[RMDB]
RNA sequence: GGGAACGACUCGAGUAGAGUCGAAAACUUUAGCCUCAAAGCCCAGUGUCAGACCACACUUUAAUGUGCCACUCUGCGGAGAGUGCAGUCUGCGAUAGUGCCCCAGGUGGACUGGGUUAACAAAGGCGCCACUCAGUAGUUUCGACUACUGAGUGGCAAAAGAAACAACAACAACAAC
Reactivity to 2A3 in 0.01 (KOAc 150mM, MgCl2 10mM, bicine 150mM(pH8.5), 24C), signal-to-noise 3, nucleotides 027 to 126: c030u070u110u150a050g030c010c030u090c080a100a120a040g040c000c010c010a010g010u000g000u030c000a000g020a000c000c000a000c000a000c010u200u090u280a190a180u160g000u020g000c000c000a000c000u040c000u020g000c010g020g010a010g000a000g000u000g000c000a000g020u000c010u040g000c000g000a030u070a000g090u080g000c010c000c000c000a010g050g000u070g050g030a000c000u010g000g000g000u010u000a000a000c010a060a000a000g120g000c160
Reactivity to DMS in 0.01 (KOAc 150mM, MgCl2 10mM, bicine 150mM(pH8.5), 24C), signal-to-noise 1, nucleotides 027 to 126: c080u000u000u000a100g050c020c020u040c070a090a040a100g010c000c000c040a150g000u000g000u000c000a010g000a020c000c040a010c000a130c190u000u120u000a030a170u030g010u010g000c060c010a020c000u000c000u000g070c040g050g010a270g080a000g010u010g000c000a000g000u000c040u050g010c000g100a180u050a000g020u030g000c000c000c000c000a050g010g030u080g020g000a080c010u010g000g000g000u080u040a040a100c060a000a020a050g040g000c110